This 207-nucleotide RNA was probed chemically with 2A3 and DMS. For 2A3 the reverse transcriptase was SuperScript II with manganese. For DMS the reverse transcriptase was MarathonRT. The reactions ran in a buffer of 150 mM KOAc, 10 mM MgCl2 and 150 mM bicine (pH 8.5), at 24 C. It was measured as part of the RMDB library OK3TST.
RNA sequence: GGGAACGACUCGAGUAGAGUCGAAAACGGCUGCUGUACACACCCUCCUUCUCACAGAGGGGAGGCGAAGGGAAGCCGACGUAAUCUCUUACGGACGGCAAUACGUGGGCUGGUUCUCAGCUGGCCCUAGUGAUGCGGCUAACCUCGUUCAGGAAGGAGCACUCUCAAUAUUCGUAUUGAGAGUGCUAAAAGAAACAACAACAACAAC
Reactivity to 2A3 in 0.01 (KOAc 150mM, MgCl2 10mM, bicine 150mM(pH8.5), 24C), signal-to-noise 2, nucleotides 027 to 156: c030g010g020c000u030g030c020u040g130u270a070c060a000c000a020c030c010c020u020c040c010u150u270c010u030c020a250c070a090g100a080g000g030g030g000a020g000g020c130g080a080a060g040g030g050a120a010g000c000c000g010a000c000g000u000a030a110u100c100u060c040u200u000a000c000g040g150a060c010g010g000c000a030a060u170a120c040g030u060g000g000g000c000u010g050g000u300u090c200u040c030a030g030c010u020g010g000c000c000c000u010a020g000u040g020a060u070g000c000g000g010c000u030a090a100c010c000u080c050g070u110u140c110a060g030g120a120a050g070g050
Reactivity to DMS in 0.01 (KOAc 150mM, MgCl2 10mM, bicine 150mM(pH8.5), 24C), signal-to-noise 1, nucleotides 027 to 156: c040g000g010c040u000g010c010u000g030u000a120c080a220c080a160c060c000c000u040c000c010u000u000c060u040c150a160c150a250g010a120g020g020g010g010a060g010g020c030g030a120a090g060g060g040a230a120g010c010c000g010a030c020g010u000a030a030u000c120u010c200u000u050a010c000g000g010a110c000g060g000c010a130a080u020a030c080g000u010g040g010g090c010u000g030g090u010u010c140u000c170a140g030c020u000g000g000c010c000c000u010a070g030u020g000a160u000g040c020g010g040c010u010a040a180c020c020u010c030g020u000u010c030a160g030g000a130a090g000g000